[RMDB]
Background
Source: RMDB library OK3TST, as collected in RNAgym. Chemical mapping of a 207-nucleotide RNA with 2A3 and DMS. Conditions: 150 mM KOAc, 10 mM MgCl2 and 150 mM bicine (pH 8.5), 24 C.

RNA sequence: GGGAACGACUCGAGUAGAGUCGAAAAUCUCCGUCUGUGCCACGUCGCUAGCGAACUCGUUCCAUGGGCCGUCACCGAAGAGGAUCGUGCCGCUGAUGCCGUUGGAUUGCAAGGACUCGAGGUGGGAAGGACUUAGGGCCCGGCGCAGCGCGGACAGAAAUGAAUGCCAGUUCGCUGGCAUUCAUUUAAAAGAAACAACAACAACAAC
Reactivity to 2A3 in 0.01 (KOAc 150mM, MgCl2 10mM, bicine 150mM(pH8.5), 24C), signal-to-noise 1, nucleotides 027 to 156: u010c020u010c010c000g000u000c000u010g000u000g010c020c020a150c080g090u180c020g020c190u100a040g010c010g030a060a070c030u040c130g160u170u060c110c020a020u060g000g030g000c010c000g030u080c000a000c020c010g040a140a020g020a010g070g020a140u040c020g010u030g010c000c010g060c050u090g050a130u150g060c070c110g150u070u090g030g020a160u070u090g050c000a000a080g000g050a020c000u000c010g030a030g000g000u020g010g000g070a070a110g040g020a100c000u050u100a120g070g000g000c020c010c000g000g000c000g000c000a010g000c030g000c010g020g010a000c000a020g050
Reactivity to DMS in 0.01 (KOAc 150mM, MgCl2 10mM, bicine 150mM(pH8.5), 24C), signal-to-noise 1, nucleotides 027 to 156: u000c000u020c010c030g040u000c000u000g000u000g000c000c010a050c070g040u000c050g010c030u010a120g000c030g010a080a090c080u000c080g010u000u000c010c020a300u000g010g050g030c030c030g040u000c070a050c000c000g010a230a230g000a070g040g000a150u000c050g000u000g000c000c050g020c110u030g010a110u000g040c020c030g000u000u000g040g040a130u000u030g010c040a100a050g020g030a060c000u000c020g030a300g000g030u020g020g040g000a100a080g020g000a200c030u000u000a170g040g010g010c000c010c020g010g040c030g050c020a030g080c020g020c010g020g010a020c020a060g030
Values cover nucleotides 27 to 156.